[RMDB]
RNA sequence: GGGAACGACUCGAGUAGAGUCGAAAACAUGACAAAGACAUUCAAGACAUUCUUCUCUCGUAAGGGGACAGCUGCAUAUCCCCUAGGCCGAGCGGCUCCCGGGCUCGGGAAGCUCCUGUGGUCCCAACCCAGUAAAUGGUUUCGACCAUUUACUGGGAAAAGAAACAACAACAACAAC
Reactivity to DMS in 0.01 (KOAc 150mM, MgCl2 10mM, bicine 150mM(pH8.5), 24C), signal-to-noise 2, nucleotides 027 to 126: c100a060u000g010a140c100a020a080a120g010a080c100a040u010u020c050a080a090g000a100c110a060u000u000c040u000u000c060u000c030u010c070g000u000a120a090g010g010g000g020a030c160a080g020c090u010g000c050a070u010a260u000c000c000c000c020u000a060g020g030c100c020g010a040g020c060g030g010c080u000c040c040c040g000g000g040c040u000c030g010g000g020a040a130g020c030u000c050c030u000g010u000g020g010u000c010c010c030a090a290
Reactivity to 2A3 in 0.01 (KOAc 150mM, MgCl2 10mM, bicine 150mM(pH8.5), 24C), signal-to-noise 2, nucleotides 027 to 126: c040a060u110g030a010c030a060a200a030g060a050c020a070u030u070c040a140a050g040a020c030a070u070u030c070u050u020c010u000c030u000c060g020u040a020a050g020g010g000g020a000c030a060g100c050u210g000c040a040u040a060u220c000c010c000c000u000a000g080g000c000c000g020a000g000c000g030g030c020u000c000c000c000g000g110g010c050u050c030g000g000g000a020a010g000c020u030c050c020u070g050u100g100g050u020c000c010c020a010a030
Overview:
This 177-nucleotide RNA was probed chemically with DMS and 2A3. For 2A3 the reverse transcriptase was SuperScript II with manganese. It was measured as part of the RMDB library OK2TRN. Conditions: 150 mM KOAc, 10 mM MgCl2 and 150 mM bicine (pH 8.5), 24 C.